[RMDB]
RNA sequence: GGGAACGACUCGAGUAGAGUCGAAAAUCGAGCUCCUCUGCCUUUCUUCUUGUGGAGAUCCACUUUUCGAGGAUUUCUUCCCUUCCUCCCCUCCGGCCCUUCCUCGACUCGGGUUGGCUCAUCCUCGCAGGACGCACCUUCGGGUGCGUCAAAAGAAACAACAACAACAAC
Reactivity to DMS in 0.01 (KOAc 150mM, MgCl2 10mM, bicine 150mM(pH8.5), 24C), signal-to-noise 3, nucleotides 027 to 129: u050c090g020a150g050c050u020c010c020u050c060u050g000c050c020u020u050u000c000u010u030c100u010u080g080u030g070g000a070g030a120u030c050c020a090c050u020u000u020u080c120g020a100g040g000a110u060u000u040c050u020u050c010c010c010u030u040c000c000u020c000c020c020c020u020c000c000g010g000c090c050c000u010u020c010c030u000c030g010a130c050u020c050g000g000g070u000u000g020g020c020u000c030a080u020c020c030u030c080g060c050a130g020